Structure probing data (2A3 and DMS) for a 177-nucleotide construct. The DMS profile rests on 1,062 reads. The data come from the RNA Mapping Database (RMDB), library OK2TRN.
RNA sequence: GGGAACGACUCGAGUAGAGUCGAAAACAGUCGUCACGGAGUAUGAUGAUUCAGUUAGUGUGAGAAUGAAGGAUGUUACACUUGAUAACUCUGGAACUGUACGUGUCAUUGCUGAAAGUCCACUCGGGCCAUGAUAGUUCUUCGGAACUAUCAUGGCAAAAGAAACAACAACAACAAC
Reactivity to 2A3 in 0.01 (KOAc 150mM, MgCl2 10mM, bicine 150mM(pH8.5), 24C), signal-to-noise 2, nucleotides 027 to 126: c010a070g090u060c000g040u040c030a030c140g070g010a020g080u180a070u250g070a060u030g000a020u100u040c000a000g030u020u160a040g000u050g040u010g150a040g000a100a040u180g020a070a020g050g080a070u120g020u080u060a020c070a020c000u060u080g070a080u250a150a060c030u000c060u090g020g080a050a020c060u020g010u170a040c020g050u100g040u020c030a090u050u130g020c000u010g020a110a060a040g010u000c010c000a040c050u030c000g030g170
Reactivity to DMS in 0.01 (KOAc 150mM, MgCl2 10mM, bicine 150mM(pH8.5), 24C), signal-to-noise 1, nucleotides 027 to 126: c030a030g030u000c130g000u000c000a060c050g000g000a090g040u000a010u000g010a080u000g010a080u000u000c030a060g010u000u010a020g050u000g000u000g010a070g000a140a120u000g000a230a100g000g000a090u000g010u000u000a050c040a110c130u000u010g010a100u010a060a050c060u000c000u000g000g000a080a080c050u000g000u010a050c130g000u010g000u010c030a090u000u000g010c030u020g000a120a040a210g050u030c000c050a050c130u000c060g000g000